Chemical mapping of a 207-nucleotide RNA with DMS and 2A3. The RNA was probed in 150 mM KOAc, 10 mM MgCl2 and 150 mM bicine (pH 8.5) at 24 C. For 2A3, 4,498 sequencing reads were counted. For 2A3 the reverse transcriptase was SuperScript II with manganese.

RNA sequence: GGGAACGACUCGAGUAGAGUCGAAAAGUCUGUGCGUUUCCAUUUGAGUAUCCUGAAAACGGGCUAUUCAGCAUGGAACGUACAUAUUAAAUAGUAGGAGUGCAUAGUGGCCCGUAUAGCAGGCAUUGAGGCGAGGAUUGUUUCGACAAUCCUCGAAGAAUUACCUAUCCUUCGGGAUAGGUAAUUCAAAAGAAACAACAACAACAAC
Reactivity to DMS in 0.01 (KOAc 150mM, MgCl2 10mM, bicine 150mM(pH8.5), 24C), signal-to-noise 2, nucleotides 027 to 156: g020u000c070u000g010u010g010c010g020u000u000u000c010c010a070u030u000u000g000a040g010u000a040u000c020c000u000g010a030a070a130a300c060g010g010g010c050u000a000u000u000c000a050g010c140a030u000g020g010a040a030c020g040u000a030c000a010u010a040u000u010a050a070a150u000a110g000u000a070g000g000a110g030u000g010c030a090u000a080g040u000g020g010c020c000c030g000u000a040u000a100g070c050a060g020g020c050a130u000u010g020a120g010g010c040g000a040g020g000a040u000u000g010u000u000u010c270g020a080c010a000a010u000c010c010u000c000g000a000a040
Reactivity to 2A3 in 0.01 (KOAc 150mM, MgCl2 10mM, bicine 150mM(pH8.5), 24C), signal-to-noise 4, nucleotides 027 to 156: g080u030c050u030g000u010g010c010g000u000u190u100c010c010a010u010u010u020g010a010g000u010a020u020c000c010u050g100a080a090a140a170c110g010g010g000c000u000a000u010u010c010a010g010c070a030u010g000g000a000a000c000g010u000a000c000a000u010a000u000u090a060a070a090u130a030g060u020a010g010g040a040g010u070g020c050a060u050a110g060u080g060g000c000c020c020g010u040a040u070a090g040c050a010g050g000c030a010u010u140g070a030g030g080c010g000a000g000g000a000u000u000g020u030u090u080c100g030a010c000a000a000u000c000c000u000c000g000a010a000